This 207-nucleotide RNA was probed chemically with DMS and 2A3.
[RMDB]
RNA sequence: GGGAACGACUCGAGUAGAGUCGAAAAGAACCACUUCGGUGGUUCAAAAAAACCUUUGUGCUGGUUGGGCGCGAUAAGCCUACCGCGCCCAUUGGGCGUCGUAGGCUUUUGACGCGUAGACCAGCACUCUGGUAAAAAAGUAUGAUUCGUCAUACAACACUGUGAUAGAAUUCGUUCUAUCACAGUGAAAAGAAACAACAACAACAAC
Reactivity to DMS in 0.01 (KOAc 150mM, MgCl2 10mM, bicine 150mM(pH8.5), 24C), signal-to-noise 2, nucleotides 027 to 156: g000a000a010c000c000a000c010u000u010c300g100g010u010g030g020u000u000c000a000a020a010a160a060a100a060c010c000u000u000u000g020u010g020c010u000g050g030u000u000g010g010g030c020g000c010g000a080u000a030a030g020c020c020u000a010c000c070g000c030g040c010c000c020a150u000u010g040g040g010c010g000u000c300g020u010a050g020g020c010u000u000u000u000g010a060c000g050c000g030u010a300g010a030c000c000a030g010c000a000c010u000c000u000g000g010u010a000a060a080a100a100a140g020u000a020u000g010a090u000u010c230g020u000c000a030u000a010c010a230a300
Reactivity to 2A3 in 0.01 (KOAc 150mM, MgCl2 10mM, bicine 150mM(pH8.5), 24C), signal-to-noise 3, nucleotides 027 to 156: g000a000a000c010c000a010c020u050u110c300g110g000u010g000g000u010u020c020a000a000a000a010a030a020a000c010c000u000u000u010g010u000g000c010u010g030g060u020u020g050g080g020c020g000c000g010a020u020a060a000g000c000c000u000a000c000c050g000c010g000c000c010c020a200u080u290g000g000g000c000g000u010c000g000u010a000g020g000c010u010u000u000u010g030a010c000g000c000g010u000a010g010a000c000c000a000g000c000a000c000u000c000u000g000g000u100a120a100a040a000a020a010g000u010a000u010g010a030u020u150c210g050u010c080a000u000a020c010a090a000
Background:
2A3 adducts were read by reverse transcription with SuperScript II with manganese. Reactivities are given for positions 27 through 156. DMS adducts were read by reverse transcription with MarathonRT.